[RMDB]
RNA sequence: GGGAACGACUCGAGUAGAGUCGAAAAUUGUAUGCGGCCACCUGCGCAUUGGUCAUCUGGGAGCAGGAACCGGAGAGGAUGACCGUGCGUCCCUUCACAGGCGCGCCGGCAGCUUCAGCCGCCGCAAGUCGCUAAUCAGGUUCGCCUGAUUAGCGACAAAAGAAACAACAACAACAAC
Reactivity to DMS in 0.01 (KOAc 150mM, MgCl2 10mM, bicine 150mM(pH8.5), 24C), signal-to-noise 2, nucleotides 027 to 126: u000u000g020u020a070u010g000c090g020g010c020c060a080c070c020u000g000c020g000c080a070u010u000g070g000u000c050a040u000c030u010g020g000g000a160g000c090a110g000g020a060a140c080c040g040g010a140g020a230g000g010a010u000g000a030c010c020g020u010g020c020g030u040c140c030c020u000u000c170a180c200a080g020g010c040g000c050g010c080c020g020g030c040a030g000c030u010u010c100a130g040c040c050g040c000c000g000c060a100a080
Reactivity to 2A3 in 0.01 (KOAc 150mM, MgCl2 10mM, bicine 150mM(pH8.5), 24C), signal-to-noise 1, nucleotides 027 to 126: u080u040g050u080a080u160g020c040g030g000c000c020a050c040c010u020g010c000g000c000a010u110u240g000g010u040c010a050u030c060u090g040g050g030a060g040c070a060g070g090a080a050c040c020g060g040a090g020a020g070g040a010u010g030a030c000c020g020u020g000c000g010u000c000c000c030u130u100c060a050c010a070g050g000c010g000c000g000c040c000g020g000c000a010g030c000u090u040c070a040g000c000c050g050c000c000g040c000a040a020